The data come from the RNA Mapping Database (RMDB), library OK3TST.
An RNA of 207 nucleotides, treated with DMS and read out base by base.
RNA sequence: GGGAACGACUCGAGUAGAGUCGAAAAACGCUCUAUCAGUUGAGAAUUCAAUUGUGUCCUUCAAUUUUGUUGAAAGUAAAGGAAUAGAAAUCCUUUUGAGUUGAAAAAGUAUUUCUUAGAGUAAUUUGCUUUCCUGACUUCUAGGAAGUAUAACAAAUGGACUACUGUUAUUCGUAACAGUAGUCCAAAAAGAAACAACAACAACAAC
Reactivity to DMS in 0.01 (KOAc 150mM, MgCl2 10mM, bicine 150mM(pH8.5), 24C), signal-to-noise 1, nucleotides 027 to 156: a040c120g060c030u000c030u010a190u000c080a040g020u030u000g020a160g010a060a170u010u020c010a090a060u000u000g000u010g010u010c010c000u000u010c030a050a050u010u010u010u000g030u010u000g000a050a010a110g010u000a010a010a050g000g010a080a170u010a130g000a070a050a070u000c030c000u000u000u000u010g010a110g000u000u000g000a090a050a080a040a100g000u010a050u000u000u010c010u000u000a100g000a110g000u020a070a140u000u010u000g010c040u020u030u000c000c020u000g000a110c070u000u000c050u000a100g020g010a020a010g040u010a010u000a050a060c070a030a060a120
The reactions ran in a buffer of 150 mM KOAc, 10 mM MgCl2 and 150 mM bicine (pH 8.5), at 24 C.
DMS adducts were read by reverse transcription with MarathonRT.